[RMDB]
RNA sequence: GGGAACGACUCGAGUAGAGUCGAAAACUGGAUUCUUUCGAGAAUCCAGCAUGUCAAGUCGCUAGCGAACGAUCAACGCUAGCGACUAGACUUUAUUGAUCGCAUUUGCCUCUUUCGAGAGGCAAAAGCCUACAGGACGAUUCGUCGUCCUGUAGGCAAAAGAAACAACAACAACAAC
Reactivity to 2A3 in 0.01 (KOAc 150mM, MgCl2 10mM, bicine 150mM(pH8.5), 24C), signal-to-noise 2, nucleotides 027 to 126: c000u000g000g000a000u000u010c010u040u120u150c260g090a000g000a010a010u000c000c000a020g000c060a060u040g030u110c050a000a050g000u030c010g020c000u000a000g030c000g030a140a050c070g010a090u040c040a000a060c030g000c000u010a000g070c020g010a000c000u000a000g000a010c000u020u080u020a080u000u070g030a040u060c020g010c150a110u020u010u010g000c000c010u050c030u040u050u120c250g110a030g000a010g050g020c020a000a000a000a000
Reactivity to DMS in 0.01 (KOAc 150mM, MgCl2 10mM, bicine 150mM(pH8.5), 24C), signal-to-noise 2, nucleotides 027 to 126: c000u000g000g000a020u000u000c000u000u000u000c150g000a010g010a020a010u000c000c000a010g000c030a050u000g010u000c060a120a060g010u000c000g000c000u010a000g010c010g000a090a030c080g020a050u010c060a160a050c010g010c010u000a000g010c010g020a000c010u000a000g010a030c100u000u010u010a080u010u000g000a070u000c040g010c300a170u000u000u000g010c010c000u000c010u000u000u000c200g020a000g000a020g000g010c010a000a000a010a070
Chemical mapping of a 177-nucleotide RNA with 2A3 and DMS. The reactions ran in a buffer of 150 mM KOAc, 10 mM MgCl2 and 150 mM bicine (pH 8.5), at 24 C. Reactivities are rounded to 0.1 and cut off at 0 and 3. Values cover nucleotides 27 to 126. The 2A3 profile rests on 1,678 reads.